The data come from the RNA Mapping Database (RMDB), library OK2TRN. Structure probing data (DMS and 2A3) for a 177-nucleotide construct. For 2A3, 93,052 sequencing reads were counted. Reactivities are given for positions 27 through 126. DMS adducts were read by reverse transcription with MarathonRT. Conditions: 150 mM KOAc, 10 mM MgCl2 and 150 mM bicine (pH 8.5), 24 C.
[RMDB]
RNA sequence: GGGAACGACUCGAGUAGAGUCGAAAAGUCGUCGAUGUCGGACGUGAUCAGGUCGGCCGCUUCGGCGUCGGUGCGCGCGACCAGCACGGUCGGCGUGCCCAUCACGUCGGCGGCGAGACGCGCGGCACCUAAAUACUCCGUUCGCGGAGUAUUUAGGAAAAGAAACAACAACAACAAC
Reactivity to DMS in 0.01 (KOAc 150mM, MgCl2 10mM, bicine 150mM(pH8.5), 24C), signal-to-noise 9, nucleotides 027 to 126: g020u010c020g020u000c010g010a090u000g020u010c020g010g010a040c020g010u000g010a110u010c210a140g010g010u000c030g010g000c010c010g010c040u010u010c050g010g010c010g010u000c080g010g020u000g010c010g010c010g010c000g010a060c010c020a220g020c190a120c170g020g020u000c000g010g010c000g020u000g000c070c060c110a070u010c060a030c010g020u000c000g010g010c010g000g000c010g000a090g000a060c020g010c050g010c030g010g010c070a160
Reactivity to 2A3 in 0.01 (KOAc 150mM, MgCl2 10mM, bicine 150mM(pH8.5), 24C), signal-to-noise 9, nucleotides 027 to 126: g060u030c020g010u020c020g070a100u070g050u090c030g040g020a050c020g040u060g040a160u150c110a050g080g200u080c020g060g030c010c010g010c030u140u140c050g020g000c000g000u010c030g010g010u070g020c010g000c020g010c000g010a030c000c010a050g160c180a060c180g040g010u010c010g020g020c000g000u000g000c000c010c010a090u190c030a000c000g010u010c000g020g030c010g000g000c010g010a020g000a010c020g010c010g000c010g050g000c020a050